An RNA of 177 nucleotides, treated with 2A3 and DMS and read out base by base. Source: RMDB library OK2TRN, as collected in RNAgym. DMS adducts were read by reverse transcription with MarathonRT. The reactions ran in a buffer of 150 mM KOAc, 10 mM MgCl2 and 150 mM bicine (pH 8.5), at 24 C. 2A3 adducts were read by reverse transcription with SuperScript II with manganese.
RNA sequence: GGGAACGACUCGAGUAGAGUCGAAAACAUGUCACGUGACAUUCUAUAGUGGAUCGGUAUACACCUAUAAUGUGACCGUAGGACGAUGAGUCGAUGAGGCAUUAAGCGUGACUCAAUGACAAGGAGCGAUUGUUAGUGGAUUCGUCCACUAAUAGUCAAAAGAAACAACAACAACAAC
Reactivity to 2A3 in 0.01 (KOAc 150mM, MgCl2 10mM, bicine 150mM(pH8.5), 24C), signal-to-noise 7, nucleotides 027 to 126: c020a030u050g000u000c000a000c020g010u020g030a010c000a030u040u000c030u040a080u020a030g040u040g040g040a050u040c020g020g010u060a090u020a060c070a030c030c030u060a030u050a160a150u110g040u030g070a100c010c000g080u180a040g080g120a020c040g050a100u210g060a020g050u050c010g030a120u110g040a060g030g010c000a000u030u020a030a000g020c010g000u000g010a010c000u010c030a030a060u070g030a040c030a080a070g090g010a050g100c060
Reactivity to DMS in 0.01 (KOAc 150mM, MgCl2 10mM, bicine 150mM(pH8.5), 24C), signal-to-noise 6, nucleotides 027 to 126: c060a070u020g000u000c010a050c070g020u000g010a080c080a030u000u000c070u010a050u000a070g010u000g000g000a090u010c070g010g020u000a060u000a230c110a080c120c140u020a190u020a150a300u010g020u010g030a100c060c210g000u000a130g020g000a080c060g030a210u030g020a300g030u000c030g020a150u010g030a200g020g000c030a030u000u000a070a090g020c110g000u000g000a020c010u000c060a020a070u000g010a030c050a090a050g010g000a090g010c140